Record summary
An RNA of 177 nucleotides, treated with DMS and 2A3 and read out base by base. Reactivities are given for positions 27 through 126. 2A3 adducts were read by reverse transcription with SuperScript II with manganese. For 2A3, 2,270 sequencing reads were counted. It was measured as part of the RMDB library OK2TST. DMS adducts were read by reverse transcription with MarathonRT.
[RMDB]
RNA sequence: GGGAACGACUCGAGUAGAGUCGAAAAUCGAGGAGUGGGAUACAAGGCCGGACCCCCGUGACGUGCUGGCGGCGAUUCGGAGCGAAGAGAUACGGUAGGGUCUCUACUCGCUCGCGUUGCGAUGCGAAGGUCACUACUGAUUCGUCAGUAGUGACCUAAAAGAAACAACAACAACAAC
Reactivity to DMS in 0.01 (KOAc 150mM, MgCl2 10mM, bicine 150mM(pH8.5), 24C), signal-to-noise 3, nucleotides 027 to 126: u000c060g000a040g020g000a120g020u010g000g010g020a120u020a080c150a080a120g020g010c020c040g000g010a210c060c030c020c040c020g030u000g020a070c090g010u010g020c070u000g010g030c030g000g000c040g000a090u010u010c100g020g010a020g010c020g010a010a050g000a030g010a030u000a060c070g010g000u010a070g010g010g010u000c010u000c010u010a100c210u000c000g010c060u000c010g000c130g000u000u000g000c050g010a110u010g020c050g020a130
Reactivity to 2A3 in 0.01 (KOAc 150mM, MgCl2 10mM, bicine 150mM(pH8.5), 24C), signal-to-noise 2, nucleotides 027 to 126: u100c000g040a050g030g040a080g060u140g000g050g010a020u040a160c070a090a090g060g000c010c000g080g000a170c030c000c000c040c000g060u060g060a060c050g020u050g010c030u030g070g050c030g030g010c010g010a050u080u110c090g060g020a010g000c000g000a000a000g010a000g020a050u070a190c040g060g070u080a050g080g090g040u020c000u000c000u040a110c000u010c000g020c000u020c000g000c010g010u030u050g020c040g000a060u040g020c010g050a040